[RMDB]
The data come from the RNA Mapping Database (RMDB), libraries RFM100 and RFMREP. An RNA of 177 nucleotides, treated with 2A3 and DMS and read out base by base. The RNA was probed in 150 mM KOAc, 10 mM MgCl2 and 150 mM bicine (pH 8.5) at 24 C. Reactivities are rounded to 0.1 and cut off at 0 and 3.
RNA sequence: GGGAACGACUCGAGUAGAGUCGAAAACUGCAUUUGUGCCCGGAAAGCGCGAAGUGUAAUCAAUGAGUAAAGCAAAUCUCAAGCCAUAAAUUGGUAAUUCCUUCUUCUUCAACGGUUUGGACGAGCCAAUACAUUCCAGUUUCGACUGGAAUGUAUUAAAAGAAACAACAACAACAAC
Reactivity to 2A3 in 0.01 (KOAc 150mM, MgCl2 10mM, bicine 150mM(pH8.5), 24C), signal-to-noise 9, nucleotides 027 to 126: c010u030g010c010a030u020u030u080g050u040g030c000c020c000g090g080a120a050a010g020c040g000c020g060a040a030g050u020g010u130a050a070u090c090a030a110u100g040a030g050u110a070a100a040g080c080a050a110a150u050c020u000c020a030a030g010c010c000a090u150a160a170a070u110u040g020g000u050a030a070u070u040c020c000u010u070c000u070u010c010u080u050c040a070a060c050g010g040u030u050u050g070g010a030c040g010a010g010c010c010
Reactivity to DMS in 0.01 (KOAc 150mM, MgCl2 10mM, bicine 150mM(pH8.5), 24C), signal-to-noise 9, nucleotides 027 to 126: c060u000g010c070a080u000u010u010g030u010g010c020c010c030g010g010a070a100a150g010c060g000c050g010a040a060g010u010g010u010a060a060u010c110a060a080u010g010a060g010u020a050a100a090g010c110a040a090a080u010c030u000c020a060a130g010c020c020a060u010a030a070a100u020u000g000g000u000a060a110u010u000c020c010u000u010c040u000u000c040u000u000c090a050a080c110g010g000u000u000u000g010g010a070c080g000a110g000c050c060